Structure probing data (DMS and 2A3) for a 177-nucleotide construct. Reactivities are given for positions 27 through 126. Conditions: 150 mM KOAc, 10 mM MgCl2 and 150 mM bicine (pH 8.5), 24 C. The data come from the RNA Mapping Database (RMDB), library OK2TRN.
RNA sequence: GGGAACGACUCGAGUAGAGUCGAAAAGAUCUGCCCAGGGUAAGUCGGGACCUAAGGCGAGGCCGACAGGCGUAGUCGAUGGAUAACCGGUUGAUAUUCCGGUACCCGCUGUGAAGCGUCAAACAUCGCAUUACGUCAACUUCGGUUGACGUAAUGCAAAAGAAACAACAACAACAAC
Reactivity to DMS in 0.01 (KOAc 150mM, MgCl2 10mM, bicine 150mM(pH8.5), 24C), signal-to-noise 3, nucleotides 027 to 126: g020a090u010c110u010g020c010c020c000a270g000g010g060u020a040a050g010u010c000g000g000g000a280c010c020u010a070a120g020g010c010g010a180g000g000c020c000g040a100c300a090g000g010c010g050u000a300g000u000c010g010a090u010g010g000a100u010a120a050c020c000g000g000u020u020g000a070u000a230u010u000c000c000g020g000u010a030c050c010c010g000c010u000g020u000g000a100a060g020c060g000u010c080a070a070a070c140a060u000c110
Reactivity to 2A3 in 0.01 (KOAc 150mM, MgCl2 10mM, bicine 150mM(pH8.5), 24C), signal-to-noise 1, nucleotides 027 to 126: g050a050u020c020u120g070c080c000c020a040g150g020g010u130a040a030g080u030c090g000g010g050a050c020c000u030a090a040g060g000c040g000a010g110g000c000c000g070a150c070a080g050g040c020g000u010a000g030u010c030g010a040u010g010g010a050u060a070a060c000c000g010g020u040u010g030a000u010a010u210u030c010c000g000g000u010a020c030c000c000g080c020u010g040u060g050a050a020g050c030g040u100c080a030a030a020c040a080u070c080

For DMS, 1,697 sequencing reads were counted.
2A3 adducts were read by reverse transcription with SuperScript II with manganese.